Chemical mapping of a 177-nucleotide RNA with 2A3.
The reactions ran in a buffer of 150 mM KOAc, 10 mM MgCl2 and 150 mM bicine (pH 8.5), at 24 C.
RNA sequence: GGGAACGACUCGAGUAGAGUCGAAAAUAUAAACUCUAAGAUCUUUGGUAUUUAAGUGUCAACAUCGAUUUAUUUAUUUAUUGCUGAGCUGACUGUAACUGACUCAAUAACAAAUCUAAUCGUGUAUCUAACCGUCUAGGUUCGCCUAGACGGUUAGAAAAGAAACAACAACAACAAC
Reactivity to 2A3 in 0.01 (KOAc 150mM, MgCl2 10mM, bicine 150mM(pH8.5), 24C), signal-to-noise 2, nucleotides 027 to 126: u190a010u010a000a110a060c020u020c060u050a160a010g050a170u020c060u040u110u070g070g010u050a060u090u050u040a200a040g070u050g020u050c050a010a030c000a140u030c010g000a030u030u000u000a000u040u020u050a050u020u060u010a060u030u020g170c130u010g030a030g060c000u020g110a090c040u100g080u110a080a060c000u030g120a090c000u000c020a000a070u050a000a000c020a020a050a050u030c040u070a020a020u020c060g030u000g040u080a040u000